[RMDB]
The record gives the reactivity of an RNA of 177 nucleotides to 2A3 and DMS. The RNA was probed in 150 mM KOAc, 10 mM MgCl2 and 150 mM bicine (pH 8.5) at 24 C. The data come from the RNA Mapping Database (RMDB), library OK2TRN. DMS adducts were read by reverse transcription with MarathonRT.
RNA sequence: GGGAACGACUCGAGUAGAGUCGAAAAGCCCCGCAUGCUGGGCACUCAGGCCGCGGGCGCGGCGCCCCUGGUGCUCGGCGAACCGGUGAGCCACCCGGAGACCAUCGCAACCGCGAUCCGCAUCGGCCAAAGUGGGUAUAUUCGUAUACCCACUUUGAAAAGAAACAACAACAACAAC
Reactivity to 2A3 in 0.01 (KOAc 150mM, MgCl2 10mM, bicine 150mM(pH8.5), 24C), signal-to-noise 3, nucleotides 027 to 126: g030c020c000c010c020g050c030a090u210g020c020u010g000g000g000c030a010c030u300c060a030g040g000c040c020g000c020g070g150g050c170g000c030g040g020c020g040c010c050c000c000u030g000g000u010g000c000u000c000g020g000c000g010a030a050c030c020g050g050u060g030a020g040c020c020a060c040c030c000g010g000a080g020a040c030c040a050u040c030g000c060a090a170c110c090g010c010g040a050u020c010c020g080c010a090u070c060g040g000c030
Reactivity to DMS in 0.01 (KOAc 150mM, MgCl2 10mM, bicine 150mM(pH8.5), 24C), signal-to-noise 8, nucleotides 027 to 126: g010c060c010c010c140g020c170a130u010g010c010u000g010g000g010c010a030c020u000c060a040g000g020c300c050g010c020g010g010g020c060g010c030g000g000c110g010c060c160c060c020u000g010g000u000g000c010u000c010g020g010c010g000a070a090c160c030g000g010u000g000a130g010c020c030a120c070c020c020g000g010a120g000a090c080c070a060u000c050g020c050a100a120c120c110g010c010g010a040u010c030c030g000c070a080u000c070g010g010c090